[RMDB]
Record summary
The data come from the RNA Mapping Database (RMDB), libraries RFM100 and RFMREP. This 177-nucleotide RNA was probed chemically with DMS and 2A3. The RNA was probed in 150 mM KOAc, 10 mM MgCl2 and 150 mM bicine (pH 8.5) at 24 C. Values cover nucleotides 27 to 126.

RNA sequence: GGGAACGACUCGAGUAGAGUCGAAAAGGAGCCAGUCCUGUGAUAACACCUGAGGGGGUGCAUCGCCGAGGUGAUUGAACGGCUGGCCACGUUCAUCAUCGGCUACAGGGGCUGAAUCCCCUGGGUUUACCCGGAAAUAGUUCGCUAUUUCCGGGUAAAAAGAAACAACAACAACAAC
Reactivity to DMS in 0.01 (KOAc 150mM, MgCl2 10mM, bicine 150mM(pH8.5), 24C), signal-to-noise 2, nucleotides 027 to 126: g000g000a110g010c110c020a040g000u000c000c010u050g020u010g030a140u030a100a140c080a030c010c010u010g020a180g020g010g010g000g010u000g010c130a070u000c120g000c010c010g000a070g000g050u020g000a010u040u000g030a020a000c030g000g000c070u010g000g010c040c060a060c010g000u010u000c010a020u000c010a080u000c030g000g010c040u010a080c110a050g030g000g000g000c120u000g020a080a140u040c000c000c000c010u000g010g000g020u010u000
Reactivity to 2A3 in 0.01 (KOAc 150mM, MgCl2 10mM, bicine 150mM(pH8.5), 24C), signal-to-noise 5, nucleotides 027 to 126: g070g010a040g020c000c000a000g030u110c020c020u120g010u050g050a080u080a180a060c010a010c020c010u060g130a230g090g130g000g010g000u040g050c050a070u120c060g020c080c000g030a050g020g070u050g020a100u030u140g000a030a000c010g000g000c020u030g020g000c000c010a010c010g020u000u010c010a020u000c000a000u040c020g040g000c030u060a060c050a060g020g000g020g010c040u070g040a030a070u120c000c010c000c000u010g020g020g010u020u010